Chemical mapping of a 207-nucleotide RNA with DMS and 2A3.
Source: RMDB library ARCHII, as collected in RNAgym.
For 2A3 the reverse transcriptase was SuperScript II with manganese.
RNA sequence: GGGAACGACUCGAGUAGAGUCGAAAAGCAGCUUCUGUAAUCACGCUUCUGUGAGGUCUGAUUGUGGGAUGGCCUGAGGCUGGGAUUCACUGUGUAGCGGACCAGCUCAUGUUGACGGAACGUCCGCACUAAGCUUGCCAUCAAUAUGGGUGCCAUGCGAGUGAAAUAACUUCGGUUAUUUCACUCGAAAAGAAACAACAACAACAAC
Reactivity to DMS in 0.01 (KOAc 150mM, MgCl2 10mM, bicine 150mM(pH8.5), 24C), signal-to-noise 2, nucleotides 027 to 156: g030c020a090g020c030u000u000c040u010g020u010a090a090u000c020a060c090g020c060u000u000c050u020g040u010g010a070g020g030u010c050u000g000a090u000u000g060u000g020g050g010a090u000g010g020c050c030u000g030a090g030g040c020u010g010g000g000a110u000u010c020a060c070u000g020u000g030u010a070g040c030g000g000a070c020c040a190g000c020u000c030a060u000g020u000u000g010a100c040g000g000a060a110c080g030u010c000c030g010c060a080c090u000a050a080g010c020u000u000g010c020c010a100u000c050a050a080u010a070u000g020g010g020u010g020c030c040a130u010g040
Reactivity to 2A3 in 0.01 (KOAc 150mM, MgCl2 10mM, bicine 150mM(pH8.5), 24C), signal-to-noise 5, nucleotides 027 to 156: g040c030a010g000c030u060u000c040u110g130u140a080a050u060c020a020c090g050c060u090u030c050u150g110u060g070a010g010g030u000c030u040g060a160u140u060g040u120g030g030g030a040u080g010g010c010c020u050g030a030g050g000c020u040g030g050g000a060u090u080c030a020c060u030g010u000g040u230a010g020c010g010g020a030c020c040a030g000c000u000c050a060u150g060u140u090g040a040c050g020g030a140a060c100g050u010c030c000g000c000a020c030u030a030a010g010c010u030u070g040c020c000a040u030c010a020a010u090a030u110g010g030g030u050g030c040c040a060u110g010

For 2A3, 3,764 sequencing reads were counted. The DMS profile rests on 7,872 reads. The reactions ran in a buffer of 150 mM KOAc, 10 mM MgCl2 and 150 mM bicine (pH 8.5), at 24 C.